The record gives the reactivity of an RNA of 177 nucleotides to 2A3. The 2A3 profile rests on 904 reads. 2A3 adducts were read by reverse transcription with SuperScript II with manganese. Source: RMDB library 15KREP, as collected in RNAgym.
RNA sequence: GGGAACGACUCGAGUAGAGUCGAAAACAGGGAAUGCUAUCCAAGGGUUUGCCUGUGGAUGUGGGGCAUCAUAUACAGCUAAUGAUGUCGAAGUCCAAUCAUCUGGCAUGAUUAAGCCAAAUGCUCUCCUCUAUUAGCUCUUCGGAGCUAAUAGAGGAAAAGAAACAACAACAACAAC
Reactivity to 2A3 in 0.01 (KOAc 150mM, MgCl2 10mM, bicine 150mM(pH8.5), 24C), signal-to-noise 1, nucleotides 027 to 126: c010a000g000g010g000a040a070u070g070c020u030a080u160c050c060a100a090g090g020g000u010u030u120g280c000c000u090g060u050g020g030a000u040g070u110g080g180g010g000c010a000u000c000a010u080a000u000a050c090a020g000c060u130a150a000u010g020a000u020g000u000c000g030a060a000g010u010c030c010a000a000u040c000a000u010c050u030g050g020c000a030u060g060a170u280u110a080a050g000c000c000a000a000a000u070g020c010u000c000u000